[RMDB]
RNA sequence: GGGAACGACUCGAGUAGAGUCGAAAAGCUAUUCGAUUGAGAUGCGGAUAGCGACAAUACCGUGUUUUUUUCACGGUGUUCUCUCGGCAAUUUUUUUUGCCGAGGGAACUAUUGUCGAACAUCUCAAGGGUUCGUACGAGUUCGCUCGUACGAACCCAAAAGAAACAACAACAACAAC
Reactivity to 2A3 in 0.01 (KOAc 150mM, MgCl2 10mM, bicine 150mM(pH8.5), 24C), signal-to-noise 1, nucleotides 027 to 126: g000c020u060a040u010u040c000g040a050u060u110g000a010g000a030u130g030c000g000g000a040u040a000g020c040g000a000c000a000a040u060a030c050c060g010u000g050u000u090u110u050u000u210u150c030a000c000g000g040u000g010u010u000c000u000c000u000c000g000g020c000a000a020u150u070u000u000u150u040u000u000g020c000c000g000a000g000g000g010a010a000c000u040a000u060u010g050u000c030g030a040a010c000a080u000c000u000c030a000a080

The record gives the reactivity of an RNA of 177 nucleotides to 2A3. For 2A3, 851 sequencing reads were counted.